Conditions: 150 mM KOAc, 10 mM MgCl2 and 150 mM bicine (pH 8.5), 24 C. Structure probing data (2A3 and DMS) for a 177-nucleotide construct. The 2A3 profile rests on 1,213 reads. 2A3 adducts were read by reverse transcription with SuperScript II with manganese. Values cover nucleotides 27 to 126. The data come from the RNA Mapping Database (RMDB), library M2PK50.
RNA sequence: GGGAACGACUCGAGUAGAGUCGAAAAUUGAACGGAUUCGUCCGUUCAACGCGUGCGAUCCAAACGUAGUACAAUAGUACAGACGAAAGCACAAGGAUCAAAUGAUACAGCCGUUCGCGGCUGUAAAACCGCUAUGAUGGUUCGCCAUCAUAGCGGUAAAAGAAACAACAACAACAAC
Reactivity to 2A3 in 0.01 (KOAc 150mM, MgCl2 10mM, bicine 150mM(pH8.5), 24C), signal-to-noise 1, nucleotides 027 to 126: u000u010g000a030a000c000g000g080a000u040u070c180g020u060c060c000g000u000u000c000a020a010c030g030c000g030u030g050c000g010a010u010c020c000a000a000a140c040g000u010a000g000u000a040c000a080a170u090a160g040u020a010c040a100g140a030c000g040a130a100a020g000c060a040c060a120a050g040g000a010u050c020a000a080a100u160g020a030u010a030c000a000g010c000c000g000u010u060c280g000c000g060g000c040u000g000u000a000a000a000
Reactivity to DMS in 0.01 (KOAc 150mM, MgCl2 10mM, bicine 150mM(pH8.5), 24C), signal-to-noise 1, nucleotides 027 to 126: u000u000g000a030a020c000g000g010a010u000u000c190g020u000c000c000g020u000u000c000a000a010c170g000c140g020u000g000c110g030a050u000c030c010a070a130a200c030g000u000a080g010u000a010c000a080a170u000a110g010u000a060c000a090g000a080c080g010a080a010a090g010c060a050c090a120a170g000g010a060u000c080a100a110a040u010g010a170u000a000c000a000g010c000c000g070u010u010c190g010c010g000g010c000u000g010u000a000a050a080